About this RNA: Structure probing data (2A3 and DMS) for a 207-nucleotide construct. 2A3 adducts were read by reverse transcription with SuperScript II with manganese. For 2A3, 1,044 sequencing reads were counted. The RNA was probed in 150 mM KOAc, 10 mM MgCl2 and 150 mM bicine (pH 8.5) at 24 C.
RNA sequence: GGGAACGACUCGAGUAGAGUCGAAAAAGUGCACUAGGUACGCCUAGUGCACAUUCCAGGACAUACUGCUGAGGAUGUCAAAAAUGCAGUUGGAGUCCUCAACUGGAUAGGCUACGCCCUAUCCAGAAAAAGACUUGGUUGUUCGCAACCAAGUCAACUUCUUGACAAUGUUCGCAUUGUCAAGAAGAAAAGAAACAACAACAACAAC
Reactivity to 2A3 in 0.01 (KOAc 150mM, MgCl2 10mM, bicine 150mM(pH8.5), 24C), signal-to-noise 1, nucleotides 027 to 156: a000g010u010g000c010a010c000u000a010g000g020u040a040c240g080c000c010u000a000g000u000g040c000a000c000a000u010u000c010c000a000g000g010a010c010a010u200a050c030u010g030c020u020g020a040g200g160a300u290g280u300c190a030a060a010a030a040u170g010c010a000g000u030u020g050g060a050g010u000c020c020u040c070a030a110c000u000g000g000a000u000a000g000g000c030u210a050c170g050c040c000c000u010a000u010c000c000a000g000a000a020a000a000a000g000a000c020u000u000g010g010u010u020g040u100u100c190g010c060a000a000c010c010a000a010g000u000c000a020a010
Reactivity to DMS in 0.01 (KOAc 150mM, MgCl2 10mM, bicine 150mM(pH8.5), 24C), signal-to-noise 2, nucleotides 027 to 156: a120g000u000g000c000a020c000u000a000g010g000u010a070c300g070c040c010u000a010g050u000g020c020a000c020a020u010u000c020c000a260g050g020a130c000a050u010a030c070u010g000c120u010g000a140g070g020a080u000g000u000c040a040a070a150a120a190u000g020c020a110g000u010u000g000g010a250g000u000c010c000u010c030a030a210c000u000g000g000a020u000a010g010g010c030u010a210c280g030c220c010c010u000a020u010c010c000a030g000a010a060a100a140a140g000a020c000u000u000g000g020u020u010g020u000u010c300g020c010a010a070c010c000a000a000g000u000c020a010a080